This 207-nucleotide RNA was probed chemically with 2A3 and DMS.

[RMDB]
RNA sequence: GGGAACGACUCGAGUAGAGUCGAAAACGACACAGACAUCUUAGUUGGACUACCAAUCAAGGUAGAGGUACAAGUCGCAUUCGGUAAGUUCGCAUUUGGUGGAAUUAAAAAGGUUCUUCCCGCAGUACUCGAAAAACAUUUCACUGAGAAGAAAAAACUCCAAGAUACGAUUCGUCGUAUCUUGGAGAAAAGAAACAACAACAACAAC
Reactivity to 2A3 in 0.01 (KOAc 150mM, MgCl2 10mM, bicine 150mM(pH8.5), 24C), signal-to-noise 2, nucleotides 027 to 156: c050g020a010c020a010c040a050g130a040c030a020u040c050u110u080a040g000u050u060g000g040a010c010u040a040c020c000a060a160u250c110a100a070g020g010u050a030g000a020g040g000u060a030c010a040a080g000u060c010g050c040a040u100u050c070g030g000u080a100a030g040u000u020c040g000c100a060u020u000u110g050g000u000g020g010a030a020u000u070a100a110a040a050a010g040g020u060u000c030u020u010c020c010c020g020c010a000g030u050a030c010u020c050g010a080a050a000a000a000c040a090u050u080u080c020a010c000u020g040a020g020a090a070g010a090a150a000a000a020a020
Reactivity to DMS in 0.01 (KOAc 150mM, MgCl2 10mM, bicine 150mM(pH8.5), 24C), signal-to-noise 1, nucleotides 027 to 156: c020g010a200c010a080c020a190g010a090c070a060u000c100u000u000a080g000u000u030g000g020a200c100u000a100c040c020a120a100u000c180a130a090g000g030u000a000g000a010g030g010u000a040c070a070a070g040u000c010g040c050a110u000u000c040g040g050u000a080a100g020u000u010c050g070c090a060u000u000u000g030g020u050g020g000a040a060u000u000a000a110a050a070a070g020g010u000u000c050u000u000c020c010c070g020c040a120g010u020a090c050u000c000g000a040a080a070a050a020c010a100u000u000u010c050a140c010u000g000a080g030a040a160g010a010a030a040a040a040a060
2A3 is a SHAPE reagent: it acylates the 2'-hydroxyl of flexible nucleotides of all four kinds. Values cover nucleotides 27 to 156.